An RNA of 207 nucleotides, treated with 2A3 and DMS and read out base by base. For 2A3, 8,577 sequencing reads were counted. For 2A3 the reverse transcriptase was SuperScript II with manganese. Source: RMDB library ARCHII, as collected in RNAgym. The RNA was probed in 150 mM KOAc, 10 mM MgCl2 and 150 mM bicine (pH 8.5) at 24 C.
RNA sequence: GGGAACGACUCGAGUAGAGUCGAAAACGCGUUCUCCGACUGCGGAUGCGCCGGUGAAAUCUAAUCAGUCUCAGCGCCGCCCUGGCCUUGUGAAUGGGCAGACGGGCGACGUGAACCGCCAAUGCAUUCACUAUGCAGGUAGAGGUUUGCCUGUGCGGAAUACUUCUACGUUCGCGUAGAAGUAUUCAAAAGAAACAACAACAACAAC
Reactivity to 2A3 in 0.01 (KOAc 150mM, MgCl2 10mM, bicine 150mM(pH8.5), 24C), signal-to-noise 8, nucleotides 027 to 156: c050g010c010g010u010u010c040u000c050c030g080a090c040u110g020c040g010g010a020u020g020c020g020c020c020g030g050u190g110a110a070a050u110c100u190a080a070u080c050a010g080u020c020u040c150a010g000c000g000c000c000g000c000c000c000u050g060g000c000c000u100u180g030u030g070a060a070u060g000g000g000c010a020g200a130c060g000g000g000c000g010a010c010g010u010g020a010a020c030c060g080c080c060a060a020u060g010c000a010u000u030c010a010c040u080a070u240g000c010a000g010g010u040a040g040a110g140g060u080u070u080g010c000c010u030g020u080g060c070g060
Reactivity to DMS in 0.01 (KOAc 150mM, MgCl2 10mM, bicine 150mM(pH8.5), 24C), signal-to-noise 2, nucleotides 027 to 156: c000g000c020g020u000u000c000u000c010c020g000a050c030u000g010c300g020g010a020u000g010c010g030c030c010g040g000u000g000a080a100a120u000c100u000a120a110u000c040a050g010u000c040u000c060a250g020c030g030c010c000g010c000c010c010u000g010g030c000c000u020u020g020u010g010a170a110u000g030g020g000c020a150g020a070c090g000g000g010c020g030a000c010g000u010g010a050a030c070c020g000c050c020a080a130u000g010c000a040u000u000c110a130c160u000a110u000g000c010a030g000g000u000a050g010a090g010g020u010u000u000g020c010c040u000g010u010g000c090g000